[RMDB]
RNA sequence: GGGAACGACUCGAGUAGAGUCGAAAAGUUACGCUGGGUAUGGAUGAGAAUAGCCGAAUGUCAACAGCACACUGAAGCGCGCACGGUGUGACAUGACAUCGGUUAAAAUUGUCCAUACCUGUGCUGAAGCGCGCACGGCAACCGAAAGGUGCGAAAACGUUCUAACCUUCUUCGGAAGGUUAGAACGAAAAGAAACAACAACAACAAC
Reactivity to 2A3 in 0.01 (KOAc 150mM, MgCl2 10mM, bicine 150mM(pH8.5), 24C), signal-to-noise 2, nucleotides 027 to 156: g140u150u100a050c010g010c010u020g000g000g020u000a000u000g000g000a000u030g080a070g070a300a300u050a040g050c000c000g080a210a300u030g000u000c020a040a040c050a270g000c000a000c000a020c000u050g050a190a080g020c000g010c000g000c000a000c020g000g000u000g000u030g050a070c080a180u300g000a000c000a010u000c060g000g040u000u020a030a070a010a060u000u050g000u020c000c000a000u000a000c000c000u000g000u000g000c010u050g000a210a060g020c050g000c000g050c000a000c020g010g000c010a000a030c000c030g060a070a040a000g030g000u030g000c030g040a090a000a000a000